RNA sequence: GGGAACGACUCGAGUAGAGUCGAAAACCUAGUCUUUCGGGAGAUGUACGCAUACCCGGGAGAUAGGAAACUCCCGGAGGUGAAAAUCAAAGUGAAAACAGAUUUUAAACCCUCGGGAGACCAACAUCUAAACAUGAUGGUUCGCCAUCAUGUUUAGAAAAGAAACAACAACAACAAC
Reactivity to 2A3 in 0.01 (KOAc 150mM, MgCl2 10mM, bicine 150mM(pH8.5), 24C), signal-to-noise 1, nucleotides 027 to 126: c000c000u020a040g140u050c020u020u000u030c010g000g000g000a300g040a150u050g100u050a020c170g000c110a000u030a080c000c010c000g030g000g010a000g000a000u010a030g020g000a030a160a030c020u000c000c010c000g000g050a020g000g000u030g010a050a050a000a010u020c060a230a050a090g090u070g170a070a050a010a000c000a010g000a000u010u000u000u020a130a210a010c000c000c030u000c000g000g000g000a000g000a010c010c020a020a020c000a050u020